[RMDB]
RNA sequence: GGGAACGACUCGAGUAGAGUCGAAAAGCGUACACAAUAUAUCUAUUUGUUUGGGUCAUAGAUGGGUCCAAAAGGGUAAAAUCUUCCUUGUAAUAGGGCUGCAUCGGUCCUGAUACGCCAGAGGCGGGUAUACACUGCUGUUCGCAGCAGUGUAUACAAAAGAAACAACAACAACAAC
Reactivity to 2A3 in 0.01 (KOAc 150mM, MgCl2 10mM, bicine 150mM(pH8.5), 24C), signal-to-noise 9, nucleotides 027 to 126: g030c030g050u150a040c080a010c070a170a040u140a060u040a060u180c090u110a240u090u100u070g160u040u080u100g020g000g000u030c040a040u040a110g040a030u050g020g020g000u000c010c000a030a070a040a050g050g020g050u170a090a140a150a160u090c070u110u110c030c000u030u030g080u090a090a150u080a230g010g010g000c020u160g040c030a020u020c020g000g000u000c000c000u020g020a070u030a070c000g010c010c020a050g030a040g160g050c030g030g000
Reactivity to DMS in 0.01 (KOAc 150mM, MgCl2 10mM, bicine 150mM(pH8.5), 24C), signal-to-noise 4, nucleotides 027 to 126: g010c030g020u010a040c110a080c100a110a090u040a090u030a040u030c110u020a090u030u000u010g010u000u010u000g000g000g000u000c030a080u030a120g010a020u010g010g000g000u000c030c020a050a040a020a050g010g000g020u040a030a090a120a110u050c110u040u020c000c010u000u000g000u020a050a120u030a110g000g000g010c010u000g010c030a020u000c030g000g020u010c000c000u000g000a090u010a030c050g020c010c050a090g020a110g010g020c050g020g010
Source: RMDB library OK1LIB, as collected in RNAgym. The record gives the reactivity of an RNA of 177 nucleotides to 2A3 and DMS. 2A3 is a SHAPE reagent: it acylates the 2'-hydroxyl of flexible nucleotides of all four kinds. Values cover nucleotides 27 to 126. 2A3 adducts were read by reverse transcription with SuperScript II with manganese. The RNA was probed in 150 mM KOAc, 10 mM MgCl2 and 150 mM bicine (pH 8.5) at 24 C. DMS adducts were read by reverse transcription with MarathonRT.